[RMDB]
RNA sequence: GGGAACGACUCGAGUAGAGUCGAAAAGUGCAGAGUGAAAUUCAUAGGUGCCCCGCCAAUGUGGCGCAAUGACCCGGUACUCCGCGCAGUCGCGCUGUAAACGUUCUGUGUUGGCGUUCAGGCCUCAGCAUAGUACGCGGUUCGCCGCGUACUAUGCAAAAGAAACAACAACAACAAC
Reactivity to DMS in 0.01 (KOAc 150mM, MgCl2 10mM, bicine 150mM(pH8.5), 24C), signal-to-noise 1, nucleotides 027 to 126: g070u010g000c040a080g010a030g000u000g000a080a070a020u060u040c110a030u050a200g000g020u000g010c020c000c060c000g000c010c000a080a120u110g000u000g000g000c000g030c040a000a000u000g010a130c000c020c030g000g000u000a120c170u000c040c050g000c080g040c070a120g010u020c070g000c020g010c080u000g100u000a030a040a180c170g000u000u000c070u000g000u030g010u000u010g000g010c100g040u000u000c160a150g010g000c020c040u000c020a250
Chemical mapping of a 177-nucleotide RNA with DMS. Conditions: 150 mM KOAc, 10 mM MgCl2 and 150 mM bicine (pH 8.5), 24 C.